The record gives the reactivity of an RNA of 207 nucleotides to 2A3. Reactivities are given for positions 27 through 156. The data come from the RNA Mapping Database (RMDB), library M2RFPK. The RNA was probed in 150 mM KOAc, 10 mM MgCl2 and 150 mM bicine (pH 8.5) at 24 C.
[RMDB]
RNA sequence: GGGAACGACUCGAGUAGAGUCGAAAAGCUAUGGUGCAACUCUUUAAGGCAAUAACGAACUAAUUCUAAGCAAGUAAUGGAGAAAUGCCAGGGUCACUAUCUAGCCAUAAUCGUGCUUGACAGUAUGAGAAUCUGCUACCCUUCGGGGUAGCAGAAAGGUAUCCGGUUAGUUCGCUAACCGGAUACCAAAAGAAACAACAACAACAAC
Reactivity to 2A3 in 0.01 (KOAc 150mM, MgCl2 10mM, bicine 150mM(pH8.5), 24C), signal-to-noise 2, nucleotides 027 to 156: g020c000u000a000u070g000g000u000g010c030a080a060c050u050c020u040u220u210a080a030g000g000c030a050a030u190a060a120c110g030a030a010c080u150a170a000u170u000c050u150a020a100g050c080a070a000g020u120a010a130u180g060g020a130g080a050a060a020u020g020c010c000a000g000g010g000u020c000a010c020u030a050u080c090u050a010g010c010c010a040u130a040a070u170c020g020u060g020c000u090u080g090a070c030a010g030u030a040u030g070a040g030a070a060u000c000u000g000c000u000a010c000c000c000u000u060c170g030g000g000g000u000a000g000c000a000g000a000a000a000